RNA sequence: GGGAACGACUCGAGUAGAGUCGAAAAAUUACUGAUCCCACCCAUUAUCCAACUCUUGAUCAAACAUUUUUAUAUGAUUAGCAUGCAUCAUAGCCUUCAUAGUAAAAAUACCUCUGUACGGACUCCAUCUUUGACUGCCAAAAGCCCAUGUAGAAGCCUAAUAUCUUUUGUUCGCAAAAGAUAUUAGAAAAGAAACAACAACAACAAC
Reactivity to 2A3 in 0.01 (KOAc 150mM, MgCl2 10mM, bicine 150mM(pH8.5), 24C), signal-to-noise 2, nucleotides 027 to 156: a000u180u110a090c060u030g060a040u010c000c010c010a010c030c020c000a130u100u150a080u150c030c030a090a110c050u000c030u110u090g070a050u120c080a110a160a010c010a220u060u110u080u190u150a130u050a050u070g060a040u000u090a040g050c040a030u080g020c000a010u020c030a070u090a040g000c000c000u040u020c000a000u000a040g060u070a030a040a110a210a000u030a080c000c030u020c080u080g090u050a030c060g070g030a040c020u000c040c010a070u000c000u080u120u070g050a030c000u010g000c000c000a000a220a000a000g010c080c010c000a000u140g020u020a050g000a170a020g020c010
Description: This 207-nucleotide RNA was probed chemically with 2A3. Conditions: 150 mM KOAc, 10 mM MgCl2 and 150 mM bicine (pH 8.5), 24 C. For 2A3 the reverse transcriptase was SuperScript II with manganese. It was measured as part of the RMDB library PDB130.